[RMDB]
This 177-nucleotide RNA was probed chemically with 2A3 and DMS.
For DMS the reverse transcriptase was MarathonRT.
RNA sequence: GGGAACGACUCGAGUAGAGUCGAAAAGAUAUGGAAUGUCGGGAGAAUUAAUGUCGGAAACGACAUACAUUCUUUGAUCGCAUUCCUAAGUCAAAGUGUUAAGAAAUGUUCGCAUUUCUUAACACAAGUAAGUAUCUAUGUUCGCAUAGAUACUUACAAAAGAAACAACAACAACAAC
Reactivity to 2A3 in 0.01 (KOAc 150mM, MgCl2 10mM, bicine 150mM(pH8.5), 24C), signal-to-noise 9, nucleotides 027 to 126: g010a010u070a040u100g010g030a020a010u030g200u300c090g020g060g010a020g010a020a000u050u070a130a060u070g000u000c010g010g030a060a050a060c010g010a000c000a000u030a010c020a010u020u010c000u270u110u060g110a140u130c010g000c010a000u010u000c000c000u010a140a020g030u020c040a080a080a070g000u000g000u010u000a000a010g010a010a010a010u030g010u060u130c300g020c130a010u010u000u000c000u000u000a000a000c000a000c000a010a000
Reactivity to DMS in 0.01 (KOAc 150mM, MgCl2 10mM, bicine 150mM(pH8.5), 24C), signal-to-noise 9, nucleotides 027 to 126: g000a030u000a300u000g000g000a020a010u000g010u010c030g010g000g000a010g010a020a010u000u000a250a060u010g010u000c000g010g000a090a080a210c000g000a000c000a010u000a070c290a050u000u000c010u000u000u010g010a090u010c020g000c040a020u000u000c000c000u000a030a110g010u000c040a070a090a100g010u000g010u000u000a010a000g000a000a010a010u000g010u000u010c260g020c010a000u000u000u000c000u000u000a000a000c000a000c000a020a060

Source information
The data come from the RNA Mapping Database (RMDB), library TTRDEL.